[RMDB]
RNA sequence: GGGAACGACUCGAGUAGAGUCGAAAAGAAAGGGACCCCUGCCAGGGGACGCAGCCAGUCGACCCCAGGCAUGUUUUUGCAUGCCAGACUGACCCCUACUGCGGGCAGGAGGGGUGGUCCCGAAAGAAUACUACUCAUGGUUCGCCAUGAGUAGUAUAAAAGAAACAACAACAACAAC
Reactivity to 2A3 in 0.01 (KOAc 150mM, MgCl2 10mM, bicine 150mM(pH8.5), 24C), signal-to-noise 3, nucleotides 027 to 126: g030a030a070a040g010g000g000a000c000c000c020c010u000g000c010c040a060g010g040g000g030a010c030g000c020a010g100c040c010a010g020u020c010g040a080c020c000c020c010a000g000g000c000a000u000g050u020u190u040u150u300g020c020a000u000g010c020c000a010g010a000c000u010g020a020c000c000c010c020u040a090c040u080g090c070g120g070g000c010a010g000g020a010g010g010g000g010u030g010g000u000c000c000c000g020a000a020a000g030a010
Reactivity to DMS in 0.01 (KOAc 150mM, MgCl2 10mM, bicine 150mM(pH8.5), 24C), signal-to-noise 5, nucleotides 027 to 126: g000a080a110a180g010g010g000a040c010c010c300c000u000g010c010c040a150g010g010g000g010a130c110g010c060a030g010c120c110a040g020u000c000g010a130c130c000c010c050a220g000g000c010a010u000g010u000u010u010u000u000g020c020a000u000g000c020c000a070g000a030c010u000g010a130c020c030c010c010u000a130c070u000g010c070g030g010g020c010a030g000g010a060g000g000g020g020u000g010g000u000c010c000c010g010a050a100a100g000a150

Chemical mapping of a 177-nucleotide RNA with 2A3 and DMS. For 2A3, 5,508 sequencing reads were counted. DMS (dimethyl sulfate) methylates the pairing face of unpaired adenines and cytosines. The reactions ran in a buffer of 150 mM KOAc, 10 mM MgCl2 and 150 mM bicine (pH 8.5), at 24 C.